Chemical mapping of a 177-nucleotide RNA with 2A3 and DMS. Reactivities are given for positions 27 through 126. The RNA was probed in 150 mM KOAc, 10 mM MgCl2 and 150 mM bicine (pH 8.5) at 24 C.
RNA sequence: GGGAACGACUCGAGUAGAGUCGAAAAGAUAUGGAGACAAGAACUACCCUACGCGCUCAACAGCUCUUUUGCAUCGGAAACGAUGCAAAAGAGACAUGAGCUGAAUGUAGGGCUUGUCUCCUAAGUCGUUUCACUUAGUGUUCGCACUAAGUGAAACAAAAGAAACAACAACAACAAC
Reactivity to 2A3 in 0.01 (KOAc 150mM, MgCl2 10mM, bicine 150mM(pH8.5), 24C), signal-to-noise 2, nucleotides 027 to 126: g060a040u160a060u280g010g010a020g000a000c010a010a000g030a130a100c100u150a130c300c020c000u010a000c030g000c000g000c010u000c000a030a140c020a210g050c020u000c000u020u020u000u010g020c000a000u000c010g030g000a070a050a090c000g010a000u000g000c020a000a010a000a000g000a000g000a010c030a040u030g000a010g010c060u050g140a240a100u300g000u010a020g000g000g000c000u000u000g000u020c010u000c000c010u020a010a010g010u040c040
Reactivity to DMS in 0.01 (KOAc 150mM, MgCl2 10mM, bicine 150mM(pH8.5), 24C), signal-to-noise 2, nucleotides 027 to 126: g000a040u020a300u000g010g000a000g010a040c000a020a000g000a050a060c170u010a300c000c000c000u000a010c000g010c140g010c010u000c010a020a100c300a190g000c000u000c000u000u010u010u000g030c000a020u000c000g030g010a120a080a200c000g010a000u000g010c000a000a000a010a000g000a010g010a000c080a100u010g000a000g020c010u020g020a040a070u010g050u000a000g000g000g010c000u010u000g010u000c000u000c000c000u000a000a090g010u000c040